[RMDB]
RNA sequence: GGGAACGACUCGAGUAGAGUCGAAAAGUGCAGGCAUUUCCUGAGGAUUAAUGACCAGCUGGGAGGAACCAGUGGCCCUUGGCUCUGCCUCCCAGCCAGCCAUUAAUUCCGAGGAAAUGUCUUUUGCACUUCUAGCCUCUUUCGAGAGGCUAGAAGUAAAAGAAACAACAACAACAAC
Reactivity to 2A3 in 0.01 (KOAc 150mM, MgCl2 10mM, bicine 150mM(pH8.5), 24C), signal-to-noise 6, nucleotides 027 to 126: g080u060g000c000a010g000g000c000a000u000u010u030c010c010u070g060a130g100g000a000u010u000a000a010u000g010a010c020c020a010g010c000u000g010g010g000a000g020g010a050a100c130c010a040g010u220g090g010c010c040c090u110u280g010g000c010u000c000u020g010c000c000u000c010c000c000a000g000c000c000a000g000c000c000a000u000u000a010a000u160u040c010c020g020a000g000g000a000a000a000u000g000u000c000u000u010u000u020g000c000
Reactivity to DMS in 0.01 (KOAc 150mM, MgCl2 10mM, bicine 150mM(pH8.5), 24C), signal-to-noise 5, nucleotides 027 to 126: g030u010g010c000a050g010g000c020a000u000u000u000c000c010u020g020a250g000g000a030u000u000a000a010u010g010a030c000c040a160g000c000u010g010g000g000a020g010g010a300a060c300c030a000g010u060g000g000c010c020c150u030u050g000g020c010u000c030u000g000c010c000u000c000c000c010a010g000c000c020a050g010c020c000a010u000u000a000a020u000u010c000c020g010a070g000g000a000a010a010u000g010u000c000u000u000u010u010g020c010

An RNA of 177 nucleotides, treated with 2A3 and DMS and read out base by base. 2A3 adducts were read by reverse transcription with SuperScript II with manganese. The reactions ran in a buffer of 150 mM KOAc, 10 mM MgCl2 and 150 mM bicine (pH 8.5), at 24 C. The data come from the RNA Mapping Database (RMDB), libraries RFM100 and RFMREP. For 2A3, 7,827 sequencing reads were counted. DMS adducts were read by reverse transcription with MarathonRT.